The record gives the reactivity of an RNA of 177 nucleotides to DMS and 2A3. The 2A3 profile rests on 1,032 reads. Values are in units of 0.01, from 0 to 300, in steps of 10. The reactions ran in a buffer of 150 mM KOAc, 10 mM MgCl2 and 150 mM bicine (pH 8.5), at 24 C. For 2A3 the reverse transcriptase was SuperScript II with manganese.

[RMDB]
RNA sequence: GGGAACGACUCGAGUAGAGUCGAAAAGCCUCUAUGCUUAUCAUCUCUUGAUUAUGGAGGAGAUGCAACGACGGGGCUAUCAGCCGGAUAGCCUUUGGCUGGAUAAGGACUACCGUGGCAAGACCUGAUUAAUCCCGGUCUUCGGACCGGGAUUAAUAAAAGAAACAACAACAACAAC
Reactivity to DMS in 0.01 (KOAc 150mM, MgCl2 10mM, bicine 150mM(pH8.5), 24C), signal-to-noise 2, nucleotides 027 to 126: g010c000c010u000c020u000a120u030g020c020u050u040a080u030c000a060u010c000u000c020u050u000g020a190u090u030a100u060g000g000a010g000g000a000g020a020u010g010c200a080a090c070g000a090c080g010g000g030g050c000u000a020u040c040a200g020c020c060g000g000a070u000a020g000c050c030u020u000u010g050g010c060u000g000g000a110u030a080a060g040g010a080c020u010a050c080c000g020u000g000g000c020a120a030g000a290c010c000u010g050
Reactivity to 2A3 in 0.01 (KOAc 150mM, MgCl2 10mM, bicine 150mM(pH8.5), 24C), signal-to-noise 3, nucleotides 027 to 126: g000c000c000u020c040u030a090u230g100c050u090u050a060u130c000a010u030c000u000c000u050u110g290a240u180u300a130u300g190g060a080g020g020a020g030a010u000g000c020a050a080c030g060a000c010g000g030g000g000c000u000a040u070c050a020g090c040c020g060g020a030u060a000g020c080c000u080u040u140g030g000c020u020g000g000a160u150a180a080g000g010a030c040u070a150c010c030g030u060g000g030c040a040a020g060a150c050c020u050g040